[RMDB]
RNA sequence: GGGAACGACUCGAGUAGAGUCGAAAAAAGAAGCUCGACAACGAUGUUCUUAAUGGUAUCAUUUCUAACGCUAGGAAUGGUUGUAUACCUCUUAGUGUCAUCCCACUGUGUGCUUCAAAUAAACUUCGUGGUGAAUCGUUCGCGAUUCACAAAAGAAACAACAACAACAAC
Reactivity to DMS in 0.01 (KOAc 150mM, MgCl2 10mM, bicine 150mM(pH8.5), 24C), signal-to-noise 6, nucleotides 027 to 129: a090a120g030a030a010g020c020u010c010g040a000c040a020a020c150g030a040u000g050u050u010c020u000u040a070a070u040g020g020u020a000u040c040a040u000u000u000c020u000a030a080c240g020c230u000a020g000g030a000a000u020g020g040u000u030g050u060a070u020a030c000c000u020c170u000u000a020g000u000g000u050c000a020u000c010c010c050a140c060u000g040u050g000u020g020c030u030u040c030a020a010a020u000a060a080a060c130u040u040c120g090u040g040
Reactivity to 2A3 in 0.01 (KOAc 150mM, MgCl2 10mM, bicine 150mM(pH8.5), 24C), signal-to-noise 9, nucleotides 027 to 129: a000a000g020a000a000g010c010u020c020g110a010c010a010a000c010g010a020u010g030u080u050c000u030u080a060a060u120g010g010u010a020u090c010a000u010u010u000c010u030a180a160c240g100c230u030a010g000g010a000a000u030g030g080u080u160g120u130a060u030a030c000c000u040c070u030u040a010g020u010g080u110c000a010u000c000c000c020a030c000u010g020u000g010u010g020c000u000u000c010a050a060a100u140a020a050a030c060u110u100c110g160u150g110
This 170-nucleotide RNA was probed chemically with DMS and 2A3. DMS adducts were read by reverse transcription with MarathonRT. The data come from the RNA Mapping Database (RMDB), library 15KLIB. For 2A3 the reverse transcriptase was SuperScript II with manganese.